RNA sequence: GGGAACGACUCGAGUAGAGUCGAAAAGAAGCAGUCCUUAUUGUGUGUGAUGUUUAGUCAUCGCACUGUGCCUACGGGCUGCCAACGUAGGGCCAAUGUGCCGAGAGGCACUAGAAGUACGGCUUAUUAUGAGGCAUCGCCGUACCAAAGAUGCUGACAUCGGUGCUAAUUUCGAUUAGCACCGAUGAAAAGAAACAACAACAACAAC
Reactivity to DMS in 0.01 (KOAc 150mM, MgCl2 10mM, bicine 150mM(pH8.5), 24C), signal-to-noise 2, nucleotides 027 to 156: g030a120a050g000c020a040g000u000c020c000u000u000a100u000u000g040u030g020u000g060u000g010a050u000g020u000u000u030a270g000u000c000a000u000c000g040c000a010c010u010g000u010g070c050c060u000a120c110g010g000g020c010u000g020c010c030a080a080c080g020u000a080g000g000g010c040c040a010a160u000g060u000g020c000c000g000a220g000a300g070g040c000a000c000u000a040g010a090a090g000u000a010c010g020g000c000u010u030a060u000u010a170u010g020a190g000g030c070a110u000c090g020c000c030g000u000a040c020c060a130a120a120g010a190u000g000c000u010g000a300
Reactivity to 2A3 in 0.01 (KOAc 150mM, MgCl2 10mM, bicine 150mM(pH8.5), 24C), signal-to-noise 3, nucleotides 027 to 156: g080a110a000g010c000a000g010u050c030c010u130u160a260u250u170g070u040g010u000g000u000g040a000u010g150u040u200u190a250g170u180c000a000u000c000g010c000a010c010u040g030u080g090c000c010u050a030c010g000g000g020c010u000g010c010c020a050a010c010g080u090a050g000g010g020c040c010a080a070u130g030u070g020c020c010g000a010g000a010g030g000c000a010c010u010a050g050a140a000g000u030a000c000g000g000c000u020u000a060u130u080a170u150g100a050g010g050c020a010u050c050g000c040c020g030u040a030c000c000a020a060a040g030a040u030g010c030u030g000a030